[RMDB]
RNA sequence: GGGAACGACUCGAGUAGAGUCGAAAAGCCCAAGUUCGAGACUGGGCCAUCUCCGAGCGAAGGGAGCGCGCUGGAAGGAUCAGCUCCCGAGAGGGGAAAACGGUAAAGAGCAUUGGAUCGUCGAAGGUGAGGACCCCAAGAAGGAAAAAAGAGAAAGCGUAAUGAUUAACUUCGGUUAAUCAUUACGAAAAGAAACAACAACAACAAC
Reactivity to 2A3 in 0.01 (KOAc 150mM, MgCl2 10mM, bicine 150mM(pH8.5), 24C), signal-to-noise 4, nucleotides 027 to 156: g010c000c010c020a030a040g070u090u130c070g050a050g010a150c040u040g010g010g000c010c010a070u040c040u010c030c030g050a040g040c030g050a120a100g020g010g010a030g000c030g000c010g010c070u070g000g090a080a050g060g020a090u100c060a020g020c000u000c010c000c000g020a030g010a010g000g020g020g020a020a070a040a030c060g000g030u100a080a070a030g040a010g000c040a040u030u180g020g000a040u050c050g060u020c040g070a060a040g020g010u060g030a040g020g030a060c000c000c020c020a030a060g030a010a030g060g010a030a070a060a000a050a040g050a020g020a060a080a010g030
Reactivity to DMS in 0.01 (KOAc 150mM, MgCl2 10mM, bicine 150mM(pH8.5), 24C), signal-to-noise 1, nucleotides 027 to 156: g000c000c010c000a090a240g000u000u000c110g000a140g000a150c050u010g000g050g000c020c080a070u010c040u010c000c000g000a050g000c040g020a090a050g000g000g020a020g010c000g020c060g050c020u000g010g000a230a110g000g020a050u000c030a270g030c050u000c000c010c000g030a050g020a180g040g000g020g020a060a100a070a110c140g000g010u000a040a060a100g010a060g040c090a210u000u000g000g020a090u010c080g030u000c050g020a100a100g000g040u000g000a120g000g000a170c070c020c020c030a040a050g050a050a100g020g010a030a060a050a000a100a190g000a200g000a170a080a080g040
This 207-nucleotide RNA was probed chemically with 2A3 and DMS. Conditions: 150 mM KOAc, 10 mM MgCl2 and 150 mM bicine (pH 8.5), 24 C. Reactivities are given for positions 27 through 156. For DMS, 2,551 sequencing reads were counted.